[RMDB]
RNA sequence: GGGAACGACUCGAGUAGAGUCGAAAAGAUAUGGAUAUAUGGCCGUGCUAAACGAAUAAGUAUUCGUCCUCUCGGAAACGAGAGGACGAAUACUUACUAUUUAGAACUACACGGUAUAUCCUAAGUCCUAACGGUCUAUGUUCGCAUAGACCGUUAGAAAAGAAACAACAACAACAAC
Reactivity to DMS in 0.01 (KOAc 150mM, MgCl2 10mM, bicine 150mM(pH8.5), 24C), signal-to-noise 1, nucleotides 027 to 126: g020a110u000a240u020g030g010a000u000a020u010a080u010g050g030c000c010g000u000g000c020u000a010a000a000c170g020a080a090u000a040a020g000u060a010u000u010c000g080u020c010c010u000c010u020c000g080g000a150a080a300c020g080a010g000a050g020g000a000c000g020a000a000u000a000c000u000u000a010c010u010a300u000u000u000a020g000a120a050c080u020a300c020a010c020g000g030u010a020u000a010u000c000c000u020a080a230g000u000c010
Chemical mapping of a 177-nucleotide RNA with DMS. The reactions ran in a buffer of 150 mM KOAc, 10 mM MgCl2 and 150 mM bicine (pH 8.5), at 24 C. For DMS the reverse transcriptase was MarathonRT. Reactivities are rounded to 0.1 and cut off at 0 and 3.